About this RNA:
This 177-nucleotide RNA was probed chemically with 2A3 and DMS. DMS adducts were read by reverse transcription with MarathonRT. The RNA was probed in 150 mM KOAc, 10 mM MgCl2 and 150 mM bicine (pH 8.5) at 24 C. 2A3 adducts were read by reverse transcription with SuperScript II with manganese.
RNA sequence: GGGAACGACUCGAGUAGAGUCGAAAAGAUAUAUUAUUCCAAAUAAUAUCAGCAUUAUACGUGAUGCAAAUUCAUGGUAUUUACAUUAGAAAUAUGACAAUAGAAGAUAAUGUGUACAUCAAAGAUCCAAGUGGUUAGUUUUCGAACUAACCACUUGAAAAGAAACAACAACAACAAC
Reactivity to 2A3 in 0.01 (KOAc 150mM, MgCl2 10mM, bicine 150mM(pH8.5), 24C), signal-to-noise 2, nucleotides 027 to 126: g000a020u070a000u010a010u260u070a050u100u120c000c000a040a120a010u130a000a020u010a040u070c020a040g050c000a010u030u000a030u080a120c140g050u090g040a020u000g020c030a110a040a040u090u120c070a060u120g060g000u020a020u110u080u020a050c010a040u000u070a040g030a050a070a010u090a050u090g030a030c040a100a070u060a100g090a160a010g040a050u000a080a020u040g000u010g030u060a000c040a030u040c060a040a110a110g150a010u110c030
Reactivity to DMS in 0.01 (KOAc 150mM, MgCl2 10mM, bicine 150mM(pH8.5), 24C), signal-to-noise 2, nucleotides 027 to 126: g000a090u000a020u000a060u000u000a030u000u010c040c050a070a060a060u000a030a030u010a030u000c050a120g000c030a020u000u000a080u010a070c140g000u020g020a010u000g010c120a100a110a080u010u010c060a110u000g020g020u000a020u000u020u000a050c030a030u000u000a020g000a120a070a080u000a010u010g030a140c230a070a030u000a050g000a100a080g010a120u010a020a020u020g000u000g010u010a030c080a050u000c120a080a130a130g000a090u010c120